[RMDB]
RNA sequence: GGGAACGACUCGAGUAGAGUCGAAAAUCAUGCUAUCACCAGCUAACUGUGUCACGUACAGUUAGUGGUGAGCGAGAGUUCACCAAGUGUCAUUGUACGUGACGAUGACGCUUUGGUGAUAGCAUGCCUAGUCGAUUCAAUUCGUUGAAUCGACUAGAAAAGAAACAACAACAACAAC
Reactivity to DMS in 0.01 (KOAc 150mM, MgCl2 10mM, bicine 150mM(pH8.5), 24C), signal-to-noise 5, nucleotides 027 to 126: u020c010a010u000g000c000u000a010u000c000a010c000c000a010g000c000u000a070a070c050u000g010u000g000u000c240a140c300g000u020a040c000a010g000u000u000a020g020u000g000g000u000g000a010g000c020g000a270g000a200g020u000u000c000a000c000c000a010a040g010u000g010u000c030a010u000u000g000u000a110c030g020u010g010a060c010g000a000u000g000a090c100g010c000u000u000u010g010g010u000g010a000u000a000g000c000a000u000g010c230
Reactivity to 2A3 in 0.01 (KOAc 150mM, MgCl2 10mM, bicine 150mM(pH8.5), 24C), signal-to-noise 3, nucleotides 027 to 126: u120c000a000u000g000c000u000a000u000c000a000c000c000a000g000c000u000a020a030c030u030g020u020g050u120c050a030c090g010u020a000c000a000g000u000u010a010g010u020g000g000u000g000a000g000c000g000a080g000a000g010u000u000c000a000c010c000a000a020g060u040g040u040c000a010u020u000g010u030a040c010g030u070g000a010c000g000a000u000g010a000c030g020c020u050u050u070g000g010u000g000a000u000a000g010c000a000u000g000c010